[RMDB]
RNA sequence: GGGAACGACUCGAGUAGAGUCGAAAACGACGACGAUGACCAUCCCGAUCGCCAACGGCACACCGAGGGUCUGAAAGUACGGCAGUCGGGUGAAGCUCAGACAGAACGUGGCACCCGCGAUGGUCAGUGUAGGUUAGCUUUUCGAAGCUAACCUACAAAAAGAAACAACAACAACAAC
Reactivity to 2A3 in 0.01 (KOAc 150mM, MgCl2 10mM, bicine 150mM(pH8.5), 24C), signal-to-noise 2, nucleotides 027 to 126: c000g050a000c040g030a010c080g160a170u080g000a000c000c000a000u000c010c040c030g000a050u060c060g000c000c000a110a090c030g050g000c030a010c010a060c040c020g050a030g090g000g040u000c030u010g050a010a020a020g210u100a020c030g020g030c010a060g170u020c020g030g000g000u020g060a070a060g030c020u040c120a040g040a200c060a070g110a120a020c040g040u020g000g020c010a010c000c000c000g000c050g010a000u020g000g000u020c000a020g030
Reactivity to DMS in 0.01 (KOAc 150mM, MgCl2 10mM, bicine 150mM(pH8.5), 24C), signal-to-noise 3, nucleotides 027 to 126: c030g000a090c150g000a060c130g010a160u000g010a000c020c010a030u000c000c030c020g000a030u010c110g010c000c010a060a080c070g020g040c000a130c080a070c000c000g030a070g020g000g010u000c000u010g000a090a150a150g000u010a060c130g010g010c020a030g000u010c000g000g000g030u000g010a080a080g020c070u020c110a100g000a180c200a110g010a150a120c100g010u000g010g010c010a070c060c040c030g000c190g020a020u000g000g010u000c000a050g020

Chemical mapping of a 177-nucleotide RNA with 2A3 and DMS. The RNA was probed in 150 mM KOAc, 10 mM MgCl2 and 150 mM bicine (pH 8.5) at 24 C. The DMS profile rests on 2,024 reads. For DMS the reverse transcriptase was MarathonRT. For 2A3, 2,535 sequencing reads were counted.